[RMDB]
RNA sequence: GGGAACGACUCGAGUAGAGUCGAAAACAAAAUGAAAAUAGCGAUGAGUGCCUUAUGCUGGUUGUGGGAGUCUUGUGAAGAACAUACUUGGCAUGUCUCAGAACACACCUGAGCGUCUGUGCCUGGGAACAGGUGAUAUGUUCGCAUAUCACCUGUUAAAAGAAACAACAACAACAAC
Reactivity to DMS in 0.01 (KOAc 150mM, MgCl2 10mM, bicine 150mM(pH8.5), 24C), signal-to-noise 4, nucleotides 027 to 126: c070a070a100a090a100u010g000a080a070a070a090u020a090g010c060g020a080u010g010a120g010u000g000c030c040u000u000a040u000g000c050u000g000g010u000u010g030u000g010g000g010a070g000u010c060u010u000g010u010g000a080a100g000a080a080c120a070u010a060c050u010u000g000g000c020a040u000g010u010c020u000c020a030g000a110a100c090a060c150a070c100c020u000g010a040g020c270g000u000c110u000g010u000g000c030c010u000g000g000g000
Reactivity to 2A3 in 0.01 (KOAc 150mM, MgCl2 10mM, bicine 150mM(pH8.5), 24C), signal-to-noise 2, nucleotides 027 to 126: c030a000a080a020a090u300g100a160a040a060a120u150a040g090c090g070a080u040g090a040g070u040g060c010c000u090u030a050u120g080c050u050g050g070u120u070g020u090g010g080g020a020g010u030c030u040u040g020u050g040a040a040g030a060a030c040a060u140a090c010u000u020g020g000c000a020u060g030u010c000u000c020a080g130a250a020c090a010c000a010c050c040u080g020a030g050c040g070u070c100u130g050u030g020c040c000u000g000g000g010